Description: An RNA of 177 nucleotides, treated with DMS and 2A3 and read out base by base. 2A3 adducts were read by reverse transcription with SuperScript II with manganese. The 2A3 profile rests on 6,600 reads. DMS adducts were read by reverse transcription with MarathonRT. The reactions ran in a buffer of 150 mM KOAc, 10 mM MgCl2 and 150 mM bicine (pH 8.5), at 24 C.
[RMDB]
RNA sequence: GGGAACGACUCGAGUAGAGUCGAAAAUCGGCGAACGAGGCCAAUGCGGCGGAGCAGAUGCAGGGGGUGGGCGCGCAGGGAAUGGCGCAGAUGGCGUCAGGCAUCGGCGGAGCGCUCAGCGGCGCGCGCUCAAAUUCCUUUUCGAAGGAAUUUGAGCAAAAGAAACAACAACAACAAC
Reactivity to DMS in 0.01 (KOAc 150mM, MgCl2 10mM, bicine 150mM(pH8.5), 24C), signal-to-noise 6, nucleotides 027 to 126: u000c070g010g030c040g020a080a070c110g030a140g020g020c020c040a070a090u000g000c070g020g020c060g000g000a110g010c060a070g000a070u000g010c060a090g000g000g000g030g010u000g000g000g010c050g010c030g010c040a090g010g000g020a080a100u010g000g000c010g020c020a110g010a080u000g010g010c020g010u000c080a030g000g010c040a050u000c040g010g010c040g010g010a170g010c050g000c020u010c050a090g020c130g000g020c050g000c070g020c110
Reactivity to 2A3 in 0.01 (KOAc 150mM, MgCl2 10mM, bicine 150mM(pH8.5), 24C), signal-to-noise 4, nucleotides 027 to 126: u070c000g040g000c020g030a080a060c040g030a080g110g000c030c040a010a040u140g020c040g040g000c030g000g040a040g000c050a030g040a090u120g020c060a070g050g020g010g020g020u100g030g040g000c020g010c020g010c010a020g040g030g030a060a110u090g020g000c020g000c010a010g070a230u140g140g020c010g030u020c030a010g000g050c030a050u040c030g020g010c020g010g040a060g010c030g000c020u030c070a020g040c040g030g010c020g000c010g000c020